Source: RMDB library OK1LIB, as collected in RNAgym. Chemical mapping of a 177-nucleotide RNA with 2A3 and DMS. Values are in units of 0.01, from 0 to 300, in steps of 10.
[RMDB]
RNA sequence: GGGAACGACUCGAGUAGAGUCGAAAACGAACCUUUAAAGACAUCACCCCACGAAUCUGAGGUGGUACGGAUUUCAGGUGGAGUGUUCGUAUACGGGAUGGGAGACUAUGGAGAGAGGGGUGAUUCCCACCGAUCGAUGGUUCGCCAUCGAUCGGUGAAAAGAAACAACAACAACAAC
Reactivity to 2A3 in 0.01 (KOAc 150mM, MgCl2 10mM, bicine 150mM(pH8.5), 24C), signal-to-noise 3, nucleotides 027 to 126: c050g010a050a100c020c000u070u150u130a160a180a000g070a000c040a020u030c000a090c020c000c000c000a000c070g110a140a010u100c040u200g000a030g110g030u050g030g040u080a070c030g000g000a050u070u060u130c130a080g150g000u090g030g040a120g010u080g020u020u000c050g010u030a000u080a090c070g000g010g020a030u090g060g040g070a050g040a040c060u080a130u110g030g010a090g010a000g010a070g050g000g000g000u000g020a030u070u020c020c000
Reactivity to DMS in 0.01 (KOAc 150mM, MgCl2 10mM, bicine 150mM(pH8.5), 24C), signal-to-noise 1, nucleotides 027 to 126: c060g000a000a160c060c080u000u000u060a000a130a140g030a050c190a000u080c010a060c020c000c040c040a110c150g000a070a080u000c000u000g040a110g020g030u000g000g000u000a190c000g000g000a080u000u060u030c040a000g050g010u090g070g000a070g010u040g000u000u000c070g040u010a040u010a080c170g000g000g000a070u040g000g000g000a120g000a050c190u000a030u020g000g020a020g050a110g000a070g000g010g000g060u010g010a230u000u000c000c030
For DMS, 1,113 sequencing reads were counted.
For 2A3, 1,146 sequencing reads were counted.
Conditions: 150 mM KOAc, 10 mM MgCl2 and 150 mM bicine (pH 8.5), 24 C.